An RNA of 177 nucleotides, treated with DMS and 2A3 and read out base by base. Reactivities are given for positions 27 through 126. High DMS reactivity at an A or C suggests that its Watson-Crick edge is free. DMS adducts were read by reverse transcription with MarathonRT. Reactivities are rounded to 0.1 and cut off at 0 and 3.

[RMDB]
RNA sequence: GGGAACGACUCGAGUAGAGUCGAAAAUACGUACCGUUCGCGGUACGUAACUUACCGAGAACCUUGCUCGGUAUAACAAGGAAACCCUAGGAAACAAGGGAACAAGAUUACCCUUCGGGGUAAUCAAGAUACUAAUCACCUUCGGGUGAUUAGUAUCAAAAGAAACAACAACAACAAC
Reactivity to DMS in 0.01 (KOAc 150mM, MgCl2 10mM, bicine 150mM(pH8.5), 24C), signal-to-noise 3, nucleotides 027 to 126: u000a000c000g020u000a000c000c000g030u000u000c220g040c020g000g000u000a000c010g010u000a010a050c180u000u000a060c010c010g010a000g000a130a160c020c020u000u010g000c000u000c000g000g000u000a010u000a040a100c210a090a100g020g000a110a090a100c050c010c000u000a180g020g020a100a060a100c020a040a020g000g000g010a170a110c200a110a080g000a010u000u000a000c000c000c000u000u000c170g030g010g000g010u000a010a000u000c010a060a030
Reactivity to 2A3 in 0.01 (KOAc 150mM, MgCl2 10mM, bicine 150mM(pH8.5), 24C), signal-to-noise 3, nucleotides 027 to 126: u040a000c000g010u000a000c020c000g010u010u060c290g010c000g090g000u000a000c000g000u000a010a020c000u020u050a010c000c000g010a010g000a050a080c000c020u010u030g000c000u000c010g000g030u020a030u080a060a000c040a020a030g080g020a100a080a040c020c010c030u060a080g030g270a110a110a040c020a020a010g000g010g060a000a030c040a050a080g000a000u000u000a000c000c010c000u030u070c220g070g000g000g010u010a000a000u000c000a000a020
It was measured as part of the RMDB library M2PK50. The reactions ran in a buffer of 150 mM KOAc, 10 mM MgCl2 and 150 mM bicine (pH 8.5), at 24 C.